[RMDB]
RNA sequence: GGGAACGACUCGAGUAGAGUCGAAAAGACACCCAUAGACUUCUCCAUCCUGUGACCUUGGUCCUGGGCUAUGCGGAGGGAACAAUUUUUUCCUACAUGAAAAGUCAGCACAACAUUCAUGGGUCUCUCCUACUUGCCCAUUCGUGGGCAAGUAGGAAAAAGAAACAACAACAACAAC
Reactivity to 2A3 in 0.01 (KOAc 150mM, MgCl2 10mM, bicine 150mM(pH8.5), 24C), signal-to-noise 3, nucleotides 027 to 126: g030a010c040a090c040c000c000a030u090a020g110a070c050u090u010c010u040c040c020a080u070c060c000u040g040u100g110a110c020c040u020u210g100g010u010c010c000u060g000g060g000c010u030a030u110g060c050g010g000a030g000g000g020a050a010c100a070a060u050u000u040u060u080u050c000c050u020a080c010a070u080g100a010a070a060a010g070u050c110a090g050c050a040c020a150a020c000a100u020u100c000a000u070g040g020g000u020c030u010c010
Reactivity to DMS in 0.01 (KOAc 150mM, MgCl2 10mM, bicine 150mM(pH8.5), 24C), signal-to-noise 1, nucleotides 027 to 126: g000a200c300a050c010c000c000a020u020a030g000a180c040u000u040c040u000c070c000a140u010c000c060u000g000u000g000a020c200c020u000u000g000g030u000c000c070u000g020g000g000c150u030a110u020g000c240g000g000a040g000g000g000a020a050c190a060a000u000u000u000u000u040u000c000c030u040a110c050a000u040g000a050a000a080a030g000u000c110a000g000c080a040c100a050a030c150a140u000u020c020a000u000g000g010g000u000c040u000c040